[RMDB]
RNA sequence: GGGAACGACUCGAGUAGAGUCGAAAAUUCAUUCAGGGUUUGAGCAUACAGGUCAAUGACCUAUGAGGAAGCAUCAGGGCCAAGUCCAUAUGCUAUGAGUCUUGCCCCCUCAUGCAUAUAAUGGCUAAUCGCAGAGAGACUUCGGUCUCUCUGCGAUAAAAGAAACAACAACAACAAC
Reactivity to DMS in 0.01 (KOAc 150mM, MgCl2 10mM, bicine 150mM(pH8.5), 24C), signal-to-noise 1, nucleotides 027 to 126: u000u000c040a060u000u010c080a090g010g000g000u000u000u000g010a080g030c140a130u010a100c250a140g000g040u010c030a030a210u010g020a040c010c000u010a030u000g000a080g020g030a090a040g010c050a040u000c110a060g010g050g000c120c040a020a090g010u000c090c110a060u000a020u000g020c040u000a010u000g010a030g000u000c030u000u000g020c020c030c070c300c010u040c010a020u010g000c010a020u000a010u000a180a100u010g000g000c020u000a080